[RMDB]
Conditions: 150 mM KOAc, 10 mM MgCl2 and 150 mM bicine (pH 8.5), 24 C. An RNA of 177 nucleotides, treated with 2A3 and DMS and read out base by base. Values cover nucleotides 27 to 126.
RNA sequence: GGGAACGACUCGAGUAGAGUCGAAAAUGGUAGACACUUAAUGAUGAAUAGGUUGGGUUAGAUUUGAUUUGAGAUCUUGAGUCACCAGGCAGUCCCAAUUUUUUUUACGAAAUAUUAGGAGUGUGCUGAAUAGACUAAACUUCGGUUUAGUCUAUUCAAAAGAAACAACAACAACAAC
Reactivity to 2A3 in 0.01 (KOAc 150mM, MgCl2 10mM, bicine 150mM(pH8.5), 24C), signal-to-noise 2, nucleotides 027 to 126: u070g020g040u050a030g040a080c000a000c080u040u120a150a030u160g070a030u010g020a050a100u080a110g080g010u030u030g050g010g040u050u040a040g020a080u020u020u120g110a110u020u060u120g120a050g010a060u020c010u010u040g000a010g020u010c000a030c080c000a010g050g000c010a000g070u000c000c000c030a000a000u000u010u010u000u000u030u040u080a020c010g050a080a060a000u130a030u100u050a030g000g010a060g050u070g000u000g040c010u010
Reactivity to DMS in 0.01 (KOAc 150mM, MgCl2 10mM, bicine 150mM(pH8.5), 24C), signal-to-noise 3, nucleotides 027 to 126: u020g010g020u010a050g010a070c050a040c030u010u010a060a040u000g010a110u020g010a070a090u010a040g010g010u010u010g010g010g010u010u000a050g000a080u010u000u000g010a150u000u010u000g000a120g010a070u000c040u000u010g010a080g010u000c010a060c100c050a070g000g000c040a080g010u010c010c010c010a020a000u000u010u010u050u010u000u010u030a110c070g010a040a050a030u010a030u000u000a040g000g010a030g020u000g010u000g000c090u000
About this RNA:
The data come from the RNA Mapping Database (RMDB), library RFMREP. For 2A3 the reverse transcriptase was SuperScript II with manganese. For DMS, 3,209 sequencing reads were counted. For 2A3, 1,603 sequencing reads were counted.